[RMDB]
RNA sequence: GGGAACGACUCGAGUAGAGUCGAAAAGGGUGGGGCCGCAGAGACCAGAGAGAAGCGACUGUUUACUAAAAACACAGGUCCGUGCGAAGUCGUAAGACGAUGUAUACGGACUGACGCCUGCCCGGUGCUAAGAAUGGUUGUUCGCAACCAUUCUUAGAAAAGAAACAACAACAACAAC
Reactivity to DMS in 0.01 (KOAc 150mM, MgCl2 10mM, bicine 150mM(pH8.5), 24C), signal-to-noise 3, nucleotides 027 to 126: g000g010g100u010g000g010g020g010c000c030g030c040a030g000a250g010a130c030c100a130g010a100g010a110g020a300a200g000c030g000a030c040u000g000u030u000u000a130c220u000a040a050a040a040a040c010a000c050a210g000g000u000c000c000g010u000g000c050g020a070a290g000u000c000g000u000a130a100g020a030c010g010a040u010g000u010a050u000a030c020g000g000a010c010u000g020a040c130g000c010c000u000g000c020c020c010g020g000u000g010